[RMDB]
RNA sequence: GGGAACGACUCGAGUAGAGUCGAAAAAGAGUGUCGGCGGCGACGGUAGCGGGAUCGCCGCCCGGUGCGAAUCGGCUGACCUGGCUCACCGCCUGAAGCGACGCCUUACCACAGACUCCGCACGACGAUGGAUAUCCUAGUUCGCUAGGAUAUCCAUAAAAGAAACAACAACAACAAC
Reactivity to 2A3 in 0.01 (KOAc 150mM, MgCl2 10mM, bicine 150mM(pH8.5), 24C), signal-to-noise 2, nucleotides 027 to 126: a010g090a040g010u030g010u030c020g000g000c000g010g010c000g000a020c040g020g010u050a030g010c020g000g050g010a080u010c000g000c010c000g000c000c000c010g040g000u010g030c030g010a030a010u040c000g000g000c000u020g000a110c040c030u050g040g010c040u040c090a130c040c060g000c000c010u030g030a040a000g030c010g000a010c000g000c000c000u030u080a060c000c020a080c020a090g110a070c060u050c040c010g020c050a020c050g060a020c050g070
Reactivity to DMS in 0.01 (KOAc 150mM, MgCl2 10mM, bicine 150mM(pH8.5), 24C), signal-to-noise 5, nucleotides 027 to 126: a070g010a120g020u000g030u000c030g000g010c000g020g020c030g000a020c140g010g010u000a100g010c040g020g010g000a160u000c020g010c000c000g040c010c010c010g010g000u000g010c190g000a150a050u000c020g000g020c010u000g000a190c250c070u010g000g000c010u000c210a140c230c160g000c020c010u020g000a150a040g000c010g030a060c040g000c010c010u000u010a230c040c020a140c160a110g000a090c130u000c010c010g010c030a120c110g000a090c160g000
This 177-nucleotide RNA was probed chemically with 2A3 and DMS. The 2A3 profile rests on 3,211 reads. DMS adducts were read by reverse transcription with MarathonRT. For DMS, 3,756 sequencing reads were counted. The reactions ran in a buffer of 150 mM KOAc, 10 mM MgCl2 and 150 mM bicine (pH 8.5), at 24 C.